Structure probing data (2A3 and DMS) for a 207-nucleotide construct. It was measured as part of the RMDB library RNAMAK. The RNA was probed in 150 mM KOAc, 10 mM MgCl2 and 150 mM bicine (pH 8.5) at 24 C. The DMS profile rests on 3,377 reads. For 2A3, 2,298 sequencing reads were counted.

RNA sequence: GGGAACGACUCGAGUAGAGUCGAAAAGUAUCACUUCGGUGAUACAGCAGGCGUACUACCUGAGAUCAACAGCUCUUGCUACCCACCCAAUCCCAAAUAGGAUUGGAGGCAAGAGACAUGAUCCAGGUAUCGCGAGUAAACCAGGUUCGCCUGGUAAAUCAUUGGAAACGUUCGCGUUUCCAAUGAUAAAAGAAACAACAACAACAAC
Reactivity to 2A3 in 0.01 (KOAc 150mM, MgCl2 10mM, bicine 150mM(pH8.5), 24C), signal-to-noise 3, nucleotides 027 to 156: g000u000a000u010c000a030c030u030u130c290g120g010u000g000a000u010a020c020a010g100c070a010g010g200c040g040u130a090c040u000a000c030c000u160g020a190g000a300u000c010a020a100c070a150g020c000u010c020u010u010g020c000u040a130c100c120c050a030c010c000c000a030a000u000c000c030c010a160a300a180u250a080g010g000a000u010u000g000g000a000g000g000c000a010a010g000a000g040a010c000a110u040g000a010u000c010c000a000g020g000u000a010u100c010g000c000g000a010g050u160a030a140a030c000c000a000g000g040u060u060c130g050c040c010u000g020g010u020a020a070
Reactivity to DMS in 0.01 (KOAc 150mM, MgCl2 10mM, bicine 150mM(pH8.5), 24C), signal-to-noise 2, nucleotides 027 to 156: g020u010a000u000c000a030c000u000u000c300g020g000u000g000a040u000a000c000a140g000c020a110g010g000c000g030u000a110c180u000a010c020c000u000g010a110g000a030u000c010a020a130c070a190g030c010u000c000u000u000g020c010u000a070c050c030c110a300c220c000c000a000a000u000c020c010c020a060a240a300u000a030g000g010a000u000u000g020g010a210g000g000c000a000a010g030a020g010a000c070a300u020g000a010u000c000c010a040g040g020u000a000u000c020g000c010g000a140g010u000a040a070a070c020c000a020g000g000u000u010c260g040c010c050u020g030g000u000a010a040